[RMDB]
RNA sequence: GGGAACGACUCGAGUAGAGUCGAAAAGGGGUCAGAGCGAUAAGAUCCCAAGUGGACGAGGAUCUGUGGCUGAAGCCUCCACGGCCACAGGGAGUCCUAGGGAUCUUUUGACGCUCUGACGGAGGCACCCAAACCGUAUCCAGUUCGCUGGAUACGGGUUGUGACAAUGGUUCGCCAUUGUCACAACAAAAGAAACAACAACAACAAC
Reactivity to 2A3 in 0.01 (KOAc 150mM, MgCl2 10mM, bicine 150mM(pH8.5), 24C), signal-to-noise 5, nucleotides 027 to 156: g080g000g050g000u000c000a000g000a000g010c020g060a120u080a300a020g000a000u030c020c010c030a030a060g300u190g010g000a010c030g020a210g040g000a000u010c000u000g000u000g010g000c000u020g020a090a010g020c000c000u010c000c000a010c010g000g000c000c000a000c000a000g000g000g010a000g000u010c000c000u010a020g000g000g000a000u010c000u010u040u040u080g060a040c010g000c000u000c000u000g000a000c000g000g000a000g000g000c000a040c000c000c000a060a040a040c000c000g000u000a000u000c000c000a000g010u070u090c180g150c110u000g000g000a000u000a000c000g000g000
Reactivity to DMS in 0.01 (KOAc 150mM, MgCl2 10mM, bicine 150mM(pH8.5), 24C), signal-to-noise 1, nucleotides 027 to 156: g020g010g010g030u010c000a050g010a030g000c020g040a090u000a050a070g030a020u010c000c000c020a130a140g040u000g030g000a040c010g000a130g000g010a070u000c050u010g000u010g000g050c000u000g020a040a080g000c000c000u010c030c010a240c010g000g000c010c010a070c000a050g000g000g000a040g030u000c000c010u000a120g010g010g010a020u010c010u010u000u040u010g020a200c030g000c030u000c000u010g000a000c000g000g020a070g080g030c020a160c020c010c010a120a090a300c000c000g000u000a020u000c030c000a010g020u000u010c300g090c020u000g010g000a000u000a000c000g000g010
This 207-nucleotide RNA was probed chemically with 2A3 and DMS.
It was measured as part of the RMDB library RNAMAK.
The DMS profile rests on 3,076 reads.
DMS (dimethyl sulfate) methylates the pairing face of unpaired adenines and cytosines.
The RNA was probed in 150 mM KOAc, 10 mM MgCl2 and 150 mM bicine (pH 8.5) at 24 C.